[RMDB]
RNA sequence: GGGAACGACUCGAGUAGAGUCGAAAAUGUUAAAUGGGAAUAGUAGAGGCAGCGCAUCUUGUUUAUAAUACUAUAUGGAACAUGGAAAAAGUGAAUCUUAUCUGGGGGGUGGAGCGACCGGAAGAAGUCACGGAGUGUUUUUCGAAACACUCCGUGAAAAAGAAACAACAACAACAAC
Reactivity to 2A3 in 0.01 (KOAc 150mM, MgCl2 10mM, bicine 150mM(pH8.5), 24C), signal-to-noise 2, nucleotides 027 to 126: u260g010u080u100a040a080a040u150g010g010g080a020a000u000a070g150u000a040g000a010g000g000c020a000g030c020g000c000a050u050c000u070u050g090u020u110u000a120u040a070a200u040a070c100u080a120u040a030u130g040g000a050a000c040a080u080g010g000a060a070a000a000a040g010u020g010a000a000u060c010u000u060a040u080c080u060g000g020g010g000g000g050u020g000g000a000g000c000g040a000c000c020g030g000a070a090g010a020a000g230
Reactivity to DMS in 0.01 (KOAc 150mM, MgCl2 10mM, bicine 150mM(pH8.5), 24C), signal-to-noise 2, nucleotides 027 to 126: u050g010u000u010a070a090a140u010g000g000g000a080a080u010a100g000u020a010g020a030g020g000c010a110g040c050g040c050a050u050c020u020u000g000u010u000u010a010u030a120a110u030a100c090u010a050u010a040u000g010g030a060a030c050a030u020g000g040a020a100a050a060a060g030u010g020a120a080u010c050u000u010a090u010c030u000g010g020g000g040g010g000u010g010g000a070g020c080g000a040c040c060g000g000a020a060g000a070a110g020